[RMDB]
RNA sequence: GGGAACGACUCGAGUAGAGUCGAAAACCAGCACAGUUGCCAGCUCCUAGGACUUUGUUGACUAGAGGCACAUUGGAACCAGAAAAUUUCAAUAGUGUCACUAGAUUGAUGUGUAACUUAGGUCCUGUUACGGAAGGAUUCGUCCUUCCGAAAAGAAACAACAACAACAAC
Reactivity to 2A3 in 0.01 (KOAc 150mM, MgCl2 10mM, bicine 150mM(pH8.5), 24C), signal-to-noise 9, nucleotides 027 to 129: c000c010a000g050c040a050c000a040g100u180u160g130c070c020a000g010c020u020c020c010u040a010g000g010a030c020u110u110u190g020u030u060g040a020c000u000a000g010a050g030g000c000a000c000a000u000u000g010g020a010a020c050c050a130g280a130a140a050a050u010u000u000c010a000a000u040a140g000u000g000u000c010a020c030u000a040g030a290u020u100g090a100u090g120u040g040u110a040a030c000u040u080a020g040g000u010c010c000u050g040u090u090a030
Reactivity to DMS in 0.01 (KOAc 150mM, MgCl2 10mM, bicine 150mM(pH8.5), 24C), signal-to-noise 5, nucleotides 027 to 129: c000c000a090g000c100a090c080a020g050u020u020g000c100c030a020g000c050u000c010c000u020a000g000g000a030c020u040u050u060g000u000u000g030a140c030u010a020g020a070g000g020c000a000c030a000u020u020g000g000a020a030c070c110a130g070a070a050a090a180u000u000u000c000a000a000u000a140g000u020g010u000c000a110c000u000a000g000a170u000u050g030a060u050g050u000g020u060a060a060c080u000u030a080g030g020u020c010c000u030g000u060u050a090